[RMDB]
RNA sequence: GGGAACGACUCGAGUAGAGUCGAAAAUUGCUAUCGUCCCGGUUCCUGGCGUCAUUAAGAUAGCCACUGCUGUUUACCUUCGUCAUUGGGGUGAACGGGACUCUUAGAUGACUGGGCCCGGAUCAGCUACUUGUUUGCAGGAUAGCUGGGGCCGAGAGUCAUAUCGGUUGUUCGCAACCGAUAUGACAAAAGAAACAACAACAACAAC
Reactivity to 2A3 in 0.01 (KOAc 150mM, MgCl2 10mM, bicine 150mM(pH8.5), 24C), signal-to-noise 1, nucleotides 027 to 156: u040u150g010c000u000a010u050c010g060u100c000c020c020g020g020u030u000c000c030u020g130g000c050g100u130c100a090u140u200a140a000g000a000u000a020g000c000c000a000c020u040g000c010u000g000u000u010u010a010c000c000u000u060c050g030u020c000a000u020u020g010g000g000g010u000g010a000a000c000g000g000g000a030c000u010c010u040u190a030g000a030u040g000a000c000u000g010g030g010c000c000c000g180g010a240u190c030a000g000c020u010a000c000u010u030g080u300u300u200g210c010a000g020g040a260u010a000g000c000u010g000g000g010g000c000c000g010a000g000a000
Structure probing data (2A3) for a 207-nucleotide construct.
Source: RMDB library ARCHII, as collected in RNAgym.
As a SHAPE reagent, 2A3 marks flexible, mostly unpaired nucleotides at the ribose 2'-OH.
The RNA was probed in 150 mM KOAc, 10 mM MgCl2 and 150 mM bicine (pH 8.5) at 24 C.